[RMDB]
RNA sequence: GGGAACGACUCGAGUAGAGUCGAAAAAUUUAGUGAAUUUUAAAGCUGAAAAGUCUGCGAGACCACCAAUAUGAUGAACGAAUCGCAUUAGAUAACGACGCAUUUCCAUAGCAGAAUGCCACGGUUCUCCUCCAGAGUAUUUCGAUACUCUGGAGGAAAAAGAAACAACAACAACAAC
Reactivity to 2A3 in 0.01 (KOAc 150mM, MgCl2 10mM, bicine 150mM(pH8.5), 24C), signal-to-noise 2, nucleotides 027 to 126: a000u080u080u010a030g020u040g060a110a110u030u220u050u300a130a030a000g000c000u010g130a010a000a000a190g100u120c140u130g030c090g000a000g010a020c000c000a030c070c040a040a040u140a080u180g020a000u090g050a110a030c030g060a020a050u090c040g010c020a020u000u110a060g100a090u080a050a120c070g070a040c000g000c010a010u030u060u070c000c020a020u160a130g050c000a060g110a060a100u020g050c000c000a050c060g030g000u030u020c010
Reactivity to DMS in 0.01 (KOAc 150mM, MgCl2 10mM, bicine 150mM(pH8.5), 24C), signal-to-noise 2, nucleotides 027 to 126: a110u030u000u140a020g000u010g000a150a010u040u000u000u000a030a150a300g050c040u000g020a080a080a030a080g010u010c010u000g000c120g000a060g010a100c050c040a020c150c040a020a020u010a030u020g010a100u000g000a040a140c090g010a030a070u020c020g020c000a040u030u010a040g000a080u000a070a070c100g000a070c030g030c050a020u000u000u000c020c010a020u010a100g020c120a050g000a060a010u000g000c050c080a080c070g000g050u000u010c120